Chemical mapping of a 207-nucleotide RNA with 2A3.
The RNA was probed in 150 mM KOAc, 10 mM MgCl2 and 150 mM bicine (pH 8.5) at 24 C.
It was measured as part of the RMDB library M2RFPK.
RNA sequence: GGGAACGACUCGAGUAGAGUCGAAAAGUAUGGAUGCCACCGUGACGGCUCAAUCACACAAGUGCCAACGAUAACGAGGCGCUCGCUAUUGCUGCGUAACUGACGGCCUGACGGUCUGGCGUUACAAAAAACGAAAAGUGGUUCGCCACUUUUCGAAGCACACUUGUGUGUUCGCACACAAGUGUGCAAAAGAAACAACAACAACAAC
Reactivity to 2A3 in 0.01 (KOAc 150mM, MgCl2 10mM, bicine 150mM(pH8.5), 24C), signal-to-noise 1, nucleotides 027 to 156: g100u040a090u170g040g030a000u070g010c010c000a000c000c000g040u050g070a070c130g020g000c010u010c150a140a240u100c010a000c020a010c000a170a000g000u000g010c000c010a020a030c030g040a070u060a170a020c000g020a030g300g070c160g110c070u010c000g000c090u000a060u130u240g050c060u080g040c040g020u000a090a050c010u010g070a030c060g010g000c000c000u040g040a020c000g000g030u000c130u000g000g000c000g000u000u010a010c010a010a040a000a000a000a010c040g000a000a000a000a000g010u000g000g010u030u060c130g000c110c000a000c000u000u000u000u000c000g000a010a010